[RMDB]
RNA sequence: GGGAACGACUCGAGUAGAGUCGAAAACAUCGCCCUCAUUUGAGCGAAGGACAAUCGCCCGAUCGGUUCGUUCGAUGGAAUCGAUGGUAAACGGAAUCAGGCUGGUCAGAUUGUCUGCCUUAUCCAGAAUACGCAGGGCAUUCGUGCCCUGCGUAUUAAAAGAAACAACAACAACAAC
Reactivity to 2A3 in 0.01 (KOAc 150mM, MgCl2 10mM, bicine 150mM(pH8.5), 24C), signal-to-noise 1, nucleotides 027 to 126: c010a040u060c020g000c020c030c020u030c010a140u000u080u300g140a020g000c070g000a140a060g160g070a020c010a020a100u040c040g040c010c040c000g040a130u010c020g060g020u010u000c010g020u020u090c030g060a070u150g050g080a050a030u130c000g010a020u000g040g010u150a030a080a050c010g060g000a030a070u130c010a100g060g000c050u090g050g010u040c050a080g060a300u180u140g000u020c040u070g010c000c000u060u080a090u080c060c000a060g160
Reactivity to DMS in 0.01 (KOAc 150mM, MgCl2 10mM, bicine 150mM(pH8.5), 24C), signal-to-noise 1, nucleotides 027 to 126: c080a040u000c080g000c020c010c010u020c160a080u000u000u030g030a090g010c010g010a080a170g000g040a060c110a190a070u000c070g000c120c060c050g000a030u000c040g040g020u010u010c000g000u000u000c040g000a000u000g030g000a010a300u010c000g000a010u000g010g000u000a090a110a140c160g000g000a090a110u000c130a030g000g000c110u000g020g020u010c080a080g000a090u000u010g010u010c020u000g010c050c050u000u040a130u000c020c040a150g000

The data come from the RNA Mapping Database (RMDB), library OK2TRN.
Chemical mapping of a 177-nucleotide RNA with 2A3 and DMS.
For DMS, 941 sequencing reads were counted.
Values are in units of 0.01, from 0 to 300, in steps of 10.
For 2A3 the reverse transcriptase was SuperScript II with manganese.
Conditions: 150 mM KOAc, 10 mM MgCl2 and 150 mM bicine (pH 8.5), 24 C.